An RNA of 177 nucleotides, treated with DMS and 2A3 and read out base by base. The DMS profile rests on 984 reads. The 2A3 profile rests on 662 reads. Reactivities are given for positions 27 through 126.
[RMDB]
RNA sequence: GGGAACGACUCGAGUAGAGUCGAAAAGAAACAGGCCGAAAGAAAAAUGGCGGAACGGCCUGACAAGGCUCGUAAAGAAUCGCCAUUAAAAAGAAACGCACCAAUGAGCCAAAGGAGAAAAAGAAAACCUGAUGGAUAUGUUCGCAUAUCCAUCAGGAAAAGAAACAACAACAACAAC
Reactivity to DMS in 0.01 (KOAc 150mM, MgCl2 10mM, bicine 150mM(pH8.5), 24C), signal-to-noise 1, nucleotides 027 to 126: g030a030a040a060c030a080g010g000c000c000g000a050a270a130g030a020a060a110a010a000u050g010g010c090g000g000a130a220c010g000g080c000c010u000g010a120c060a060a100g000g020c000u000c030g020u000a120a060a050g000a100a070u040c000g040c020c000a000u060u030a050a010a000a040a000g000a060a160a130c130g080c120a010c120c080a090a030u080g000a050g000c000c000a140a100a230g000g000a130g000a060a010a170a040a010g000a180a040a130a180
Reactivity to 2A3 in 0.01 (KOAc 150mM, MgCl2 10mM, bicine 150mM(pH8.5), 24C), signal-to-noise 1, nucleotides 027 to 126: g300a000a160a000c000a000g000g120c060c080g020a300a050a000g200a000a020a150a000a000u000g000g000c000g000g000a100a000c000g000g010c000c000u010g070a000c120a030a000g020g000c000u000c120g030u120a010a090a230g080a000a180u130c000g000c000c000a000u000u050a050a150a030a000a000g150a140a100a000c060g000c050a020c000c020a060a130u040g010a020g000c000c000a000a000a000g040g030a060g010a020a150a000a020a000g140a000a020a000a000